[RMDB]
RNA sequence: GGGAACGACUCGAGUAGAGUCGAAAACGAGGAGGUGGAGAUGCCAUGCCGACCCGAAGAGGAAAGAAGGACGCGAGACGCAAACCUGUGAGUGGACACCCGCUUUAUUCACUGGGGACGACAACUCUAAGUCACUAGUUCGCUAGUGACAAAAGAAACAACAACAACAAC
Reactivity to 2A3 in 0.01 (KOAc 150mM, MgCl2 10mM, bicine 150mM(pH8.5), 24C), signal-to-noise 9, nucleotides 027 to 129: c050g010a050g020g000a020g010g020u060g020g010a080g000a050u130g040c040c030a050u100g020c000c020g030a050c000c000c020g010a030a010g020a000g020g010a030a030a010g030a010a020g000g000a000c020g030c030g040a080g010a030c050g010c110a060a080a100c000c010u040g010u030g030a010g010u030g010g010a010c010a070c040c030c000g010c020u090u120u110a110u090u080c040a040c090u050g000g010g000g010a030c030g020a020c030a100a080c010u010c020u100a090a040
Reactivity to DMS in 0.01 (KOAc 150mM, MgCl2 10mM, bicine 150mM(pH8.5), 24C), signal-to-noise 9, nucleotides 027 to 129: c090g010a050g000g000a020g000g020u000g000g040a070g020a100u040g010c110c100a080u050g020c070c020g000a050c050c040c080g000a040a060g020a040g000g000a030a030a040g000a050a030g020g000a070c110g040c110g030a010g030a070c080g020c130a050a070a090c070c040u030g030u010g020a000g020u020g010g010a020c100a060c050c010c010g020c110u000u000u000a030u020u020c040a020c050u030g000g040g000g000a110c090g000a050c130a060a130c090u030c030u060a060a210
Source: RMDB library 15KLIB, as collected in RNAgym. The record gives the reactivity of an RNA of 170 nucleotides to 2A3 and DMS. The reactions ran in a buffer of 150 mM KOAc, 10 mM MgCl2 and 150 mM bicine (pH 8.5), at 24 C. Reactivities are given for positions 27 through 129. DMS adducts were read by reverse transcription with MarathonRT. In probing experiments dimethyl sulfate is read out at A N1 and C N3, which are open when not base-paired.